[RMDB]
RNA sequence: GGGAACGACUCGAGUAGAGUCGAAAAGAUAUGGACCGAACUACUCGUUCCCUAAUCGAAGAACUCGGAAACGAGGGAGAUUAGCACGAGCGGUCCUAAGUCAAAGUCGAAACUUCGGUUUCGACAAGCCUCCCUAAUUGUUCGCAAUUAGGGAGGCAAAAGAAACAACAACAACAAC
Reactivity to DMS in 0.01 (KOAc 150mM, MgCl2 10mM, bicine 150mM(pH8.5), 24C), signal-to-noise 1, nucleotides 027 to 126: g000a060u020a300u020g000g000a000c000c000g000a050a000c040u010a300c020u000c000g000u000u000c060c060c000u000a000a000u000c000g000a020a290g000a120a190c000u000c000g010g000a050a050a290c000g030a020g000g030g000a060g000a060u010u000a060g010c130a000c010g050a000g000c040g000g000u030c000c000u000a000a120g000u000c050a170a080a110g000u000c000g010a000a000a000c010u000u000c210g010g000u000u000u020c000g000a000c010a040a020
Reactivity to 2A3 in 0.01 (KOAc 150mM, MgCl2 10mM, bicine 150mM(pH8.5), 24C), signal-to-noise 1, nucleotides 027 to 126: g040a010u060a060u190g000g000a000c000c010g040a190a020c070u180a010c010u240c000g030u090u150c000c000c000u000a000a000u010c000g200a300a020g000a060a140c030u030c010g010g010a130a060a030c010g000a010g000g020g000a040g000a010u000u030a010g010c250a020c030g000a010g040c000g050g000u020c000c000u020a110a000g060u000c080a110a030a110g000u030c010g000a010a020a000c000u050u120c300g140g010u000u000u010c000g000a000c000a000a000
This 177-nucleotide RNA was probed chemically with DMS and 2A3. Reactivities are given for positions 27 through 126. DMS adducts were read by reverse transcription with MarathonRT. For 2A3, 1,762 sequencing reads were counted. The RNA was probed in 150 mM KOAc, 10 mM MgCl2 and 150 mM bicine (pH 8.5) at 24 C.